[RMDB]
RNA sequence: GGGAACGACUCGAGUAGAGUCGAAAAAGUGGAAGAUGUUUGCCAACCCAGUCUGCGUCGGCCUUGAUGCUAGUCGGUUUGACCAGCAUGUUUCGGUGGAUGCCUUGAGGUUCACCCACGGCGUGUAGAACUCUCCCGUCUUCGGACGGGAGAGUUCAAAAGAAACAACAACAACAAC
Reactivity to 2A3 in 0.01 (KOAc 150mM, MgCl2 10mM, bicine 150mM(pH8.5), 24C), signal-to-noise 1, nucleotides 027 to 126: a000g040u100g060g010a080a000g170a200u100g000u210u080u000g050c020c030a000a120c050c010c010a030g000u000c000u200g000c020g020u020c000g100g020c060c060u090u070g000a000u030g040c020u000a010g000u050c030g170g000u000u130u300g140a040c000c000a010g000c000a010u010g040u090u070u090c050g000g030u000g010g010a120u100g210c000c040u140u110g130a260g070g000u010u000c000a110c010c000c000a030c000g000g050c000g000u050g120u120a080

Source: RMDB library OK1LIB, as collected in RNAgym.
This 177-nucleotide RNA was probed chemically with 2A3.
The 2A3 profile rests on 369 reads.